Structure probing data (DMS and 2A3) for a 177-nucleotide construct. It was measured as part of the RMDB library OK2TST. The reactions ran in a buffer of 150 mM KOAc, 10 mM MgCl2 and 150 mM bicine (pH 8.5), at 24 C. For 2A3 the reverse transcriptase was SuperScript II with manganese.
RNA sequence: GGGAACGACUCGAGUAGAGUCGAAAAUGAACUAGUCAAUAAACACGCUCAAGUCACCUUUACUAUUCCAGAAGCUUUCUUCAAGUGUCUCAAAAUGAGACCUGCAUGUUUUAAGGAUAAGGGACAACUCAUGAUUGCUAUUCGUAGCAAUCAUGAGAAAAGAAACAACAACAACAAC
Reactivity to DMS in 0.01 (KOAc 150mM, MgCl2 10mM, bicine 150mM(pH8.5), 24C), signal-to-noise 3, nucleotides 027 to 126: u010g030a110a140c070u000a110g000u010c030a070a070u000a110a150a080c060a060c070g010c020u000c060a050a080g000u010c030a100c050c030u000u000u000a130c110u000a100u000u000c020c030a130g010a040a140g010c100u010u000u010c020u000u000c090a020a050g000u000g010u010c000u000c030a060a050a140a120u010g000a010g010a050c000c020u000g000c120a030u000g000u000u000u000u010a050a120g000g000a070u010a090a080g030g010g000a060c100a060a160
Reactivity to 2A3 in 0.01 (KOAc 150mM, MgCl2 10mM, bicine 150mM(pH8.5), 24C), signal-to-noise 3, nucleotides 027 to 126: u070g000a050a010c060u050a090g090u080c060a030a150u080a150a070a010c050a030c050g020c030u050c090a030a070g010u000c020a180c070c000u030u050u080a090c060u070a100u120u060c000c000a020g010a060a000g050c020u090u090u070c000u100u030c040a130a060g060u040g070u140c000u000c020a170a300a110a230u220g000a010g000a000c020c000u020g020c030a050u110g050u100u070u000u050a070a020g020g000a030u020a050a040g010g020g020a010c030a020a030